[RMDB]
RNA sequence: GGGAACGACUCGAGUAGAGUCGAAAAUCUUCUCUCUGCUAGAGACCAGAGGCCUUGAAGGAAGGAAGCCCAAGGGUCUCUCCUGGCUCUGCUUCCCCAUCACUGCCUCCACUUCCCCGCAUCCCUUUCGUCAUGAGCAAUUCGUUGCUCAUGACGAAAAAGAAACAACAACAACAAC
Reactivity to 2A3 in 0.01 (KOAc 150mM, MgCl2 10mM, bicine 150mM(pH8.5), 24C), signal-to-noise 1, nucleotides 027 to 126: u080c020u080u000c080u050c000u000c020u020g030c040u120a010g010a020g020a070c020c040a050g000a010g020g000c030c040u000u000g050a140a050g100g010a090a150g090g080a070a010g000c020c010c010a070a030g010g030g030u050c040u000c000u030c130c020u010g030g000c010u050c040u020g000c000u010u040c000c000c000c000a060u000c000a000c030u010g010c000c000u010c010c000a120c000u040u030c010c000c000c020g030c010a070u060c000c000c000u000u010